[RMDB]
RNA sequence: GGGAACGACUCGAGUAGAGUCGAAAACAGUCGCGAAGCGUAAAACCGUCAUGUGCGGUGACGAGAUUAAUCGCGGCACUUGGCAGACGACCAUUACGUUUAAAAACAUCGCUGGAGGCAGCAAAAAGACCAUAAAUUAUUUCGAUAAUUUAUGGUCAAAAGAAACAACAACAACAAC
Reactivity to 2A3 in 0.01 (KOAc 150mM, MgCl2 10mM, bicine 150mM(pH8.5), 24C), signal-to-noise 7, nucleotides 027 to 126: c010a010g040u040c010g010c030g070a040a030g020c010g030u040a040a080a030a130c010c010g010u020c040a210u190g110u150g080c030g020g010u010g010a010c020g020a010g020a130u110u220a120a120u060c010g000c000g010g000c000a020c030u030u070g040g000c030a030g010a130c040g020a050c020c010a050u060u100a030c040g030u040u040u110a080a110a010a010a020c040a050u110c050g000c030u010g030g010a040g080g060c010a000g000c030a020a070a010a010a090
Reactivity to DMS in 0.01 (KOAc 150mM, MgCl2 10mM, bicine 150mM(pH8.5), 24C), signal-to-noise 8, nucleotides 027 to 126: c110a130g020u000c030g020c040g010a040a120g010c040g000u000a050a070a090a070c050c010g000u010c010a090u010g030u000g020c050g000g020u000g010a020c010g010a100g010a120u000u010a140a110u000c010g010c010g010g000c000a040c060u010u000g010g000c030a060g000a050c060g010a080c060c060a120u000u000a040c070g000u000u000u000a060a070a090a100a070c120a100u010c110g010c030u000g000g000a110g010g010c040a040g010c070a050a070a090a120a110